This 307-nucleotide RNA was probed chemically with 2A3 and DMS.

[RMDB]
RNA sequence: GGGAACGACUCGAGUAGAGUCGAAAAGACGUGCUCUACGGAGCACGUCACGGCAAGCUUCGGCUUGCCGAAGGAAGCACGUGAGUGCUUCCAAGUUGCAUUCUUCGGAAUGCAACAAGUUCGCGUUCGCGCGAACAAGUGAACGUCUACGGACGUUCACAACCGUACACGUACGCGUGUACGGAGGCUUACUUCGGUAAGCCAACUGCAAGCGUGAGCUUGCAGAAUGAUGUGCAGCUUCUUAGGUGCAUCUCGUAUAGAAGCGUAACCUCGAGUUCGCUCGAGGUAAAAGAAACAACAACAACAAC
Reactivity to 2A3 in 0.01 (KOAc 150mM, MgCl2 10mM, bicine 150mM(pH8.5), 24C), signal-to-noise 9, nucleotides 027 to 266: g000a000c000g000u000g000c000u000c010u020a100c300g080g000a000g010c000a000c000g000u000c000a000c000g000g000c010a000a010g000c000u040u300c290g120g000c010u010u000g000c000c000g000a020a000g000g000a000a000g010c000a000c020g080u100g130a090g010u000g020c000u000u000c000c000a000a020g000u000u000g000c000a000u000u000c010u010u040c190g150g010a000a000u000g000c000a000a000c000a000a020g000u000u000c010g000c000g010u040u030c220g020c000g000c000g120a010a000c020a040a050g010u000g000a000a000c000g000u000c010u030a060c300g130g000a000c000g000u000u000c000a000c000a000a020c000c000g000u000a000c000a000c000g030u050a020c210g020c000g090u000g000u000a000c000g000g000a050g000g000c000u010u000a000c000u020u030c100g080g000u000a000a000g000c000c000a020a060c000u010g000c000a000a000g000c010g020u070g060a030g010c000u000u000g000c000a000g000a010a040u150g030a020u060g020u050g040c040a090g070c080u110u080c070u240u300a100g080g060u060g030c020a050u030c040u050c080g080u130a120u060a250g140a160a030g090c060g060u100a030
Reactivity to DMS in 0.01 (KOAc 150mM, MgCl2 10mM, bicine 150mM(pH8.5), 24C), signal-to-noise 4, nucleotides 027 to 266: g000a020c000g020u000g010c000u000c000u010a110c160g010g000a020g010c000a000c000g010u000c000a060c020g000g000c010a020a000g010c010u000u030c200g020g000c000u000u000g000c000c000g000a030a050g010g000a020a010g010c000a000c010g000u020g000a140g000u000g010c000u000u000c000c000a040a070g010u000u000g010c010a010u000u000c000u000u010c170g020g000a010a000u000g020c010a000a000c000a120a130g000u000u000c000g010c010g020u000u030c200g020c020g030c000g000a010a000c010a110a110g000u000g010a010a000c000g000u000c000u010a150c180g020g010a010c000g010u000u000c000a000c000a070a100c010c010g000u000a000c000a000c000g020u010a050c130g030c000g030u000g000u000a010c000g000g000a030g010g000c010u010u010a010c000u000u020c130g010g020u000a000a000g000c000c010a010a030c010u000g000c000a010a020g000c010g000u010g000a120g020c000u000u000g000c000a000g010a100a040u000g010a010u000g020u000g000c030a100g010c030u010u010c100u000u010a060g010g010u000g000c030a030u010c150u000c040g000u000a130u010a070g020a080a080g000c020g000u010a090